The data come from the RNA Mapping Database (RMDB), library OK2TRN.
Chemical mapping of a 177-nucleotide RNA with DMS and 2A3.
Values are in units of 0.01, from 0 to 300, in steps of 10.
The DMS profile rests on 1,790 reads.
DMS adducts were read by reverse transcription with MarathonRT.
In probing experiments dimethyl sulfate is read out at A N1 and C N3, which are open when not base-paired.
The reactions ran in a buffer of 150 mM KOAc, 10 mM MgCl2 and 150 mM bicine (pH 8.5), at 24 C.
The 2A3 profile rests on 2,403 reads.
RNA sequence: GGGAACGACUCGAGUAGAGUCGAAAACAAGGUGCUUUACUGCCAGGCCAAGGAUCGUGGGCUCUACGUCUGCGCCGCGCGCAACUCGGCGGGCCAGACGCUCAGUGCCGUGCAGCUGCACGUGAAAGAGUCUUUAGAACUUCGGUUCUAAAGACUCAAAAGAAACAACAACAACAAC
Reactivity to DMS in 0.01 (KOAc 150mM, MgCl2 10mM, bicine 150mM(pH8.5), 24C), signal-to-noise 2, nucleotides 027 to 126: c070a150a100g000g000u000g000c010u010u000u010a140c030u000g020c020c120a110g010g040c050c060a130a200g000g000a030u000c020g020u000g000g000g000c020u000c020u000a110c050g000u000c030u000g000c100g000c010c170g010c140g020c020g020c070a050a160c120u020c030g020g000c080g000g000g000c020c000a020g000a030c020g010c110u000c040a100g010u020g050c040c010g030u010g010c030a070g030c110u000g000c010a020c020g010u000g010a090a110a100
Reactivity to 2A3 in 0.01 (KOAc 150mM, MgCl2 10mM, bicine 150mM(pH8.5), 24C), signal-to-noise 2, nucleotides 027 to 126: c020a060a100g120g000u050g010c030u070u090u250a080c000u000g000c010c030a050g020g020c030c050a080a120g240g000a060u040c030g030u060g010g010g000c000u000c010u050a020c020g000u000c000u010g000c040g020c080c090g160c020g010c000g020c030a050a300c070u020c040g110g000c000g010g000g000c000c000a100g000a060c010g010c000u040c030a060g020u070g030c020c010g000u040g000c000a020g060c030u080g000c010a010c020g090u120g080a040a060a010